An RNA of 207 nucleotides, treated with 2A3 and read out base by base. Source: RMDB library RNAMAK, as collected in RNAgym. The reactions ran in a buffer of 150 mM KOAc, 10 mM MgCl2 and 150 mM bicine (pH 8.5), at 24 C.

RNA sequence: GGGAACGACUCGAGUAGAGUCGAAAAGGGGUCCGUAAGGGCCAUGGAGGCAUCGAUCAUACACUGAAGCCUCCACGGUGUAUGGGAGCCUCCACGCGCCUAGUUACGGACGGAGGCACCCAAAAUCCCCACUCCACGUUCGCGUGGAGUGGGGAAACAUUCCUUCCUGGUUCGCCAGGAAGGAAUGAAAAGAAACAACAACAACAAC
Reactivity to 2A3 in 0.01 (KOAc 150mM, MgCl2 10mM, bicine 150mM(pH8.5), 24C), signal-to-noise 1, nucleotides 027 to 156: g030g010g080g000u010c010c030g020u080a080a170g020g050g000c040c010a000u050g010g000a000g020g000c020a060u210c180g090a030u070c080a050u120a160c050a030c110u060g030a110a010g030c000c000u000c010c010a000c010g030g010u070g010u030a080u050g010g000g000a040g010c020c000u000c010c000a030c050g080c020g020c000c000u120a160g070u130u260a040c100g010g000a010c020g000g000a020g000g000c000a020c010c000c020a030a020a010a120u000c020c000c000c000a000c000u000c000c000a010c010g010u020u060c260g010c010g100u000g000g000a000g000u000g000g000g000g030a000a000a000